[RMDB]
RNA sequence: GGGAACGACUCGAGUAGAGUCGAAAACCGGAAUGGUUCCGCCGUGAUGGGGCCAUGCAAUAGUUGCCAACGACAACUAUGCUCCGGUUGCUCAGGCAGCGUAACGCUGCUUGAAAGACCACAUGAAUUAGCGCGACAUUGUUCGCAAUGUCGCGAACGUGUUCUAAACCUUCGGGUUUAGAACACGAAAAGAAACAACAACAACAAC
Reactivity to 2A3 in 0.01 (KOAc 150mM, MgCl2 10mM, bicine 150mM(pH8.5), 24C), signal-to-noise 3, nucleotides 027 to 156: c020c010g010g040a070a090u070g010g030u020u010c000c020g040c080c120g250u220g120a260u180g010g000g000g000c000c000a010u030g010c000a000a300u000a020g000u000u000g020c030c110a190a080c190g070a160c010a010a000c010u000a000u010g000c030u030c000c010g000g000u000u010g010c030u010c000a000g010g000c000a010g020c020g080u170a100a070c300g000c010u010g000c000u000u000g000a010a000a010g030a020c040c030a020c050a170u190g120a210a110u180u120a070g110c000g000c000g010a000c000a000u010u000g010u050u060c160g010c160a000a000u010g000u020c000g010c000g000a010a000
Reactivity to DMS in 0.01 (KOAc 150mM, MgCl2 10mM, bicine 150mM(pH8.5), 24C), signal-to-noise 2, nucleotides 027 to 156: c000c000g040g020a080a060u000g020g000u000u000c000c000g060c080c200g050u000g000a240u000g010g010g010g000c020c010a000u000g080c070a120a050u010a000g000u000u000g040c020c020a300a160c260g000a100c000a030a000c000u000a010u000g010c050u000c030c030g070g010u000u000g010c170u000c010a040g030g010c000a010g000c010g010u000a170a160c160g020c000u000g000c010u010u000g000a050a110a170g000a300c020c020a140c100a080u000g000a140a200u000u000a160g010c020g010c010g000a020c010a020u000u000g010u000u000c200g040c000a020a010u000g000u000c030g040c000g000a000a040
Structure probing data (2A3 and DMS) for a 207-nucleotide construct. For 2A3 the reverse transcriptase was SuperScript II with manganese. Values cover nucleotides 27 to 156. DMS adducts were read by reverse transcription with MarathonRT.